[RMDB]
RNA sequence: GGGAACGACUCGAGUAGAGUCGAAAACUUCGCAACUUCGGUUGCGAAGAAUGGCAGCUCGUCCCGGCGCUGGGUUCGCCGGCUUAUAAAACAUAACACAUCACUGGCUACCAUUCGUGGUAGCCAACAAAUUAGACUGCUUCGGCAGUCUAAUUUGAAAAGAAACAACAACAACAAC
Reactivity to DMS in 0.01 (KOAc 150mM, MgCl2 10mM, bicine 150mM(pH8.5), 24C), signal-to-noise 2, nucleotides 027 to 126: c010u000u000c010g000c000a000a000c000u000u010c160g010g010u000u000g000c000g000a010a000g030a050a070u000g010g010c090a100g000c020u000c060g010u000c070c010c010g010g000c020g010c100u000g030g010g000u010u000c050g000c010c000g010g000c210u000u000a080u000a040a050a060a060c130a080u000a050a010c070a070c100a070u010c070a100c170u000g010g000c000u000a000c000c000a020u000u010c200g020u000g030g000u000a000g020c000c000a000a020
Reactivity to 2A3 in 0.01 (KOAc 150mM, MgCl2 10mM, bicine 150mM(pH8.5), 24C), signal-to-noise 2, nucleotides 027 to 126: c000u010u000c000g010c010a000a000c000u050u050c170g150g010u000u000g000c000g000a000a000g000a010a010u010g050g030c040a030g030c040u020c040g030u030c020c020c000g040g080c020g000c060u240g050g090g000u070u080c030g010c040c000g000g040c080u250u070a120u090a160a100a020a020c030a080u210a100a060c100a000c000a100u120c030a060c120u040g000g030c000u000a000c000c010a000u020u050c210g040u040g010g000u000a000g000c000c000a000a010